[RMDB]
RNA sequence: GGGAACGACUCGAGUAGAGUCGAAAAAGAUCUCUGAAAAGAGUUGGUGCAUUCGCACUAAAUCUUUGUAUUGCGACGAACUUGUUUGUAGCGGAUACCGCAUCGCUCGGGGGGAACGCUGUUCUCCCAUAAUUGCUCCCUUCGGGGAGCAAUUAUGAAAAGAAACAACAACAACAAC
Reactivity to DMS in 0.01 (KOAc 150mM, MgCl2 10mM, bicine 150mM(pH8.5), 24C), signal-to-noise 9, nucleotides 027 to 126: a080g000a100u000c010u000c010u020g010a090a030a040a010g000a020g010u030u010g010g000u000g000c010a220u030u040c210g010c000a010c010u000a020a050a040u000c010u000u010u000g000u020a080u020u010g010c050g010a060c090g000a070a080c120u010u010g010u010u010u020g010u010a050g010c010g000g010a100u020a070c090c090g000c080a110u010c050g000c030u000c070g010g000g000g000g000g000a050a050c040g020c150u020g000u000u000c010u010c010c050
Reactivity to 2A3 in 0.01 (KOAc 150mM, MgCl2 10mM, bicine 150mM(pH8.5), 24C), signal-to-noise 7, nucleotides 027 to 126: a000g050a050u020c010u020c020u070g070a030a030a030a000g030a010g030u100u210g050g000u010g000c020a090u090u180c150g000c000a020c030u050a020a030a050u020c020u010u040u070g090u090a130u060u220g050c030g040a040c010g010a070a090c080u060u130g110u200u160u170g120u110a050g020c010g000g010a030u090a090c040c040g030c050a050u040c020g010c040u010c080g010g000g000g000g010g020a050a020c050g050c300u080g020u010u000c040u000c020c000